[RMDB]
RNA sequence: GGGAACGACUCGAGUAGAGUCGAAAAGUGCUGACGUGCAGUCCCACCCGAUACGGCGGUGUCAAAGGAGCGCACCGCAUCGAUCUGGACGCCAUACAGUGAGCCCGAAACGGGGACAUGCGAUGGAGUGCACUUUUGUGUUCGCACAAAAGUGCACAAAAGAAACAACAACAACAAC
Reactivity to DMS in 0.01 (KOAc 150mM, MgCl2 10mM, bicine 150mM(pH8.5), 24C), signal-to-noise 1, nucleotides 027 to 126: g000u010g030c000u000g040a170c050g040u000g010c090a080g000u000c030c000c000a300c140c050c080g000a040u030a120c150g000g020c000g040g040u000g010u020c120a070a100a130g000g000a130g010c200g000c000a070c000c000g050c020a000u030c000g020a070u040c000u000g020g000a170c070g040c000c030a040u000a060c100a190g030u000g020a190g000c000c030c030g090a040a130a160c240g000g000g000g000a090c050a060u020g040c060g000a170u000g000g010a120
Reactivity to 2A3 in 0.01 (KOAc 150mM, MgCl2 10mM, bicine 150mM(pH8.5), 24C), signal-to-noise 1, nucleotides 027 to 126: g080u050g000c010u060g110a030c040g090u110g000c030a010g110u030c020c000c000a010c020c000c020g000a010u080a120c030g030g020c000g030g000u000g040u000c000a110a000a240g240g040a130g070c100g000c030a010c030c000g070c010a030u060c010g030a020u030c000u020g020g080a070c050g030c030c000a030u060a090c020a040g100u050g090a020g030c000c000c000g120a190a170a040c150g030g040g000g000a000c000a030u040g040c040g050a030u060g010g070a170
Chemical mapping of a 177-nucleotide RNA with DMS and 2A3.
Conditions: 150 mM KOAc, 10 mM MgCl2 and 150 mM bicine (pH 8.5), 24 C.
For 2A3 the reverse transcriptase was SuperScript II with manganese.
The DMS profile rests on 520 reads.